[RMDB]
RNA sequence: GGGAACGACUCGAGUAGAGUCGAAAAAGAUGAAAACAUUAUUGCUGUAAUUCCUGGGGCGUCUUUCCAUGGAGACAAUGUAGUAAAGAAAUCUGACAAAAUGCCUUGGUACAAUGGACCAACAUUGGUUUAUAACUUUUUUCGAAAAGUUAUAAACAAAAGAAACAACAACAACAAC
Reactivity to 2A3 in 0.01 (KOAc 150mM, MgCl2 10mM, bicine 150mM(pH8.5), 24C), signal-to-noise 3, nucleotides 027 to 126: a000g030a020u090g030a050a080a010a060c020a030u060u130a030u050u140g020c030u030g020u080a070a060u080u010c000c000u020g010g000g030g000c090g180u040c050u050u090u020c010c010a050u160g040g010a030g020a030c020a040a010u110g020u050a050g020u040a030a080a040g010a020a090a020u040c020u040g010a040c050a040a190a000a040u070g030c000c020u010u020g030g010u040a060c050a100a220u150g040g020a020c020c000a030a030c040a060u040u070g020
Reactivity to DMS in 0.01 (KOAc 150mM, MgCl2 10mM, bicine 150mM(pH8.5), 24C), signal-to-noise 5, nucleotides 027 to 126: a050g000a110u000g000a090a070a090a110c060a080u000u000a070u000u000g010c020u000g010u010a100a080u000u000c020c020u000g020g010g000g040c300g020u010c060u010u000u000c040c030a050u020g000g000a070g010a070c070a070a060u000g010u000a040g010u000a020a060a120g000a060a080a050u000c040u010g000a170c130a030a060a040a050u000g000c080c040u000u000g010g010u000a070c050a080a060u000g000g000a070c040c020a050a050c100a070u000u000g010
Source: RMDB library OK2TST, as collected in RNAgym. Structure probing data (2A3 and DMS) for a 177-nucleotide construct. The 2A3 profile rests on 3,310 reads.